RNA sequence: GGGAACGACUCGAGUAGAGUCGAAAAGACUGCGUGCACUUGAGACGAUAUCGAGCCGGAAAUUAAUCGAUAAUGUCUCUAGUAGUGGAUACGAUCCGGCAAGUAUCGACUACCUGUGCUCGUAGGACAUAUCAUCCCGAUUCGUCGGGAUGAUAUGAAAAGAAACAACAACAACAAC
Reactivity to 2A3 in 0.01 (KOAc 150mM, MgCl2 10mM, bicine 150mM(pH8.5), 24C), signal-to-noise 9, nucleotides 027 to 126: g080a020c000u000g000c000g010u010g000c000a000c020u050u070g000a000g000a000c010g020a030u000a010u070c010g000a010g000c000c010g010g110a070a160a040u300u260a110a120u130c000g000a010u020a070a060u150g030u000c000u000c010u010a040g020u010a000g010u030g160g000a000u000a010c010g010a020u010c000c000g000g000c050a080a010g000u000a000u010c030g050a010c000u030a060c000c030u040g000u000g000c000u000c000g000u010a000g000g010a000
Reactivity to DMS in 0.01 (KOAc 150mM, MgCl2 10mM, bicine 150mM(pH8.5), 24C), signal-to-noise 4, nucleotides 027 to 126: g000a160c010u000g010c000g020u010g000c010a000c000u040u040g000a000g010a000c000g010a110u010a000u010c000g010a060g010c000c000g000g000a140a120a150u030u030a080a100u020c010g000a000u000a020a100u010g010u000c010u010c010u000a050g010u010a020g010u010g010g000a010u000a000c000g000a120u020c010c000g000g020c010a100a210g000u000a000u000c000g000a050c010u000a010c010c300u040g010u000g000c000u000c020g060u010a010g010g010a140